[RMDB]
RNA sequence: GGGAACGACUCGAGUAGAGUCGAAAAGAUAUGGAAGCUCCGAGAUAAUGAUCGGAAACGAUCACUAUCGAUGAGGGGAGGCUUCCUAAGUCAAAGCAUCACCUACAGUUCGCUGUAGGUGAUGCAAGAACAACACCUACUUCGGUAGGUGUUGUUCAAAAGAAACAACAACAACAAC
Reactivity to DMS in 0.01 (KOAc 150mM, MgCl2 10mM, bicine 150mM(pH8.5), 24C), signal-to-noise 1, nucleotides 027 to 126: g000a030u000a300u000g000g000a020a000g020c000u010c000c000g000a170g020a010u000a010a000u000g010a000u000c000g000g000a080a080a230c030g030a010u000c000a010c030u000a010u000c000g000a140u010g000a180g000g030g010g000a080g020g000c020u010u000c000c000u000a020a070g000u000c020a090a120a140g010c000a010u000c000a010c000c000u000a000c000a030g010u030u010c260g010c020u000g000u000a010g000g000u000g000a000u000g000c000a010a020
Reactivity to 2A3 in 0.01 (KOAc 150mM, MgCl2 10mM, bicine 150mM(pH8.5), 24C), signal-to-noise 2, nucleotides 027 to 126: g000a010u050a010u120g000g020a000a000g000c050u030c070c040g060a080g010a130u030a030a040u020g000a000u000c030g010g070a050a030a030c000g010a000u010c000a000c010u020a020u000c070g110a170u300g120a270g110g090g070g040a080g250g000c010u010u000c010c000u020a120a030g090u000c060a060a080a080g000c010a000u010c010a000c000c020u000a000c010a030g090u070u170c240g060c190u020g010u000a000g000g000u000g000a010u000g010c000a020a000
Structure probing data (DMS and 2A3) for a 177-nucleotide construct. Conditions: 150 mM KOAc, 10 mM MgCl2 and 150 mM bicine (pH 8.5), 24 C. For DMS the reverse transcriptase was MarathonRT. The data come from the RNA Mapping Database (RMDB), library TTRDEL.